[RMDB]
Structure probing data (DMS and 2A3) for a 177-nucleotide construct. It was measured as part of the RMDB libraries RFM100 and RFMREP.
RNA sequence: GGGAACGACUCGAGUAGAGUCGAAAACUUCGACAGGGCGGGCAAAGGUGCGCAGGCAACUCGUCAGGCGAUCGACGUUAAUGAAGCAAAUCUCCAAACGCCAACGAUGAGCGUUUCGCAAUCGCCGUGUAAGGCAAAUAUUCGUAUUUGCCUUACAAAAAGAAACAACAACAACAAC
Reactivity to DMS in 0.01 (KOAc 150mM, MgCl2 10mM, bicine 150mM(pH8.5), 24C), signal-to-noise 9, nucleotides 027 to 126: c080u010u010c050g020a090c120a090g010g010g010c030g010g010g000c110a050a090a070g000g010u010g000c070g020c070a060g000g000c070a070a060c090u000c040g000u010c040a100g010g010c010g000a050u010c060g010a050c050g010u020u020a060a090u020g000a070a100g000c090a050a080a120u020c040u010c030c050a040a050a040c020g000c000c020a080a150c160g000a120u010g010a110g010c030g010u000u000u010c070g000c090a100a040u010c020g000c020c020g010
Reactivity to 2A3 in 0.01 (KOAc 150mM, MgCl2 10mM, bicine 150mM(pH8.5), 24C), signal-to-noise 9, nucleotides 027 to 126: c020u060u050c020g030a020c010a090g020g000g050c030g010g010g010c050a090a060a040g080g010u050g010c030g000c020a010g040g010c010a040a060c020u010c020g040u020c030a050g010g020c000g010a040u050c030g050a060c020g010u030u100a090a040u210g060a050a000g010c040a040a060a090u070c050u000c010c010a050a030a010c020g000c020c020a080a080c090g130a110u140g030a020g020c010g010u010u030u040c040g000c030a030a050u050c020g010c030c010g010

For 2A3 the reverse transcriptase was SuperScript II with manganese.
The reactions ran in a buffer of 150 mM KOAc, 10 mM MgCl2 and 150 mM bicine (pH 8.5), at 24 C.